[RMDB]
RNA sequence: GGGAACGACUCGAGUAGAGUCGAAAAGUCCUGCCGGAGGCCAUUGCUAUCGGAGUCCGAUUUAGCCAUGCUAGUCGCACGAGUUUAGACUCGUAGCAUAUAGCUCAGUAACACGUGGCCCAACUACGGCAAAAUGGGUGUUCGCACCCAUUUUGCCAAAAGAAACAACAACAACAAC
Reactivity to 2A3 in 0.01 (KOAc 150mM, MgCl2 10mM, bicine 150mM(pH8.5), 24C), signal-to-noise 1, nucleotides 027 to 126: g030u040c000c000u010g020c060c050g050g000a080g040g080c000c000a030u020u020g030c000u040a000u010c010g110g000a090g120u070c010c050g010a000u070u020u160a000g000c000c000a050u080g000c000u020a020g050u050c030g000c000a020c030g010a000g000u030u100u230a140g030a100c040u000c000g020u000a070g050c010a000u070a000u020a170g000c010u030c100a090g010u070a060a060c040a000c160g020u000g000g000c000c000c000a040a060c070u100a070c110